Description: Chemical mapping of a 177-nucleotide RNA with DMS and 2A3. The RNA was probed in 150 mM KOAc, 10 mM MgCl2 and 150 mM bicine (pH 8.5) at 24 C. Reactivities are given for positions 27 through 126. The data come from the RNA Mapping Database (RMDB), libraries RFM100 and RFMREP.
RNA sequence: GGGAACGACUCGAGUAGAGUCGAAAAUGACUUGUGCAGUGGCCGAGGCGAUCGGAUUGUGAUGUCGCCUGAAAAGGCGGGACCCAACGUCGCGCCUUUCGCCAGAAGAUGGAAAUAUGCGCAACGUUCUAUUCAAUUCCUUCGGGAAUUGAAUAGAAAAAGAAACAACAACAACAAC
Reactivity to DMS in 0.01 (KOAc 150mM, MgCl2 10mM, bicine 150mM(pH8.5), 24C), signal-to-noise 3, nucleotides 027 to 126: u000g000a080c130u000u000g030u020g000c000a030g000u010g000g020c010c110g020a100g000g010c020g000a010u000c090g000g000a120u020u010g030u030g010a050u000g000u000c000g010c000c000u030g000a070a060a070a000g000g010c010g020g010g000a090c030c070c180a170a100c140g000u010c020g020c010g020c010c000u000u010u000c090g040c020c000a130g000a070a080g010a120u050g040g000a070a080a060u000a040u010g010c000g000c010a010a050c180g000u020
Reactivity to 2A3 in 0.01 (KOAc 150mM, MgCl2 10mM, bicine 150mM(pH8.5), 24C), signal-to-noise 5, nucleotides 027 to 126: u130g020a040c030u030u010g000u010g000c010a040g010u050g070g040c020c030g080a070g000g000c000g000a020u020c020g110g090a160u210u210g030u050g040a050u030g060u110c000g010c000c000u030g010a020a040a000a000g000g000c010g010g020g030a030c020c050c010a050a030c050g020u010c020g000c000g000c050c000u000u030u000c030g000c000c010a020g040a110a010g050a070u270g030g060a040a100a000u250a060u080g000c000g000c010a010a010c030g020u000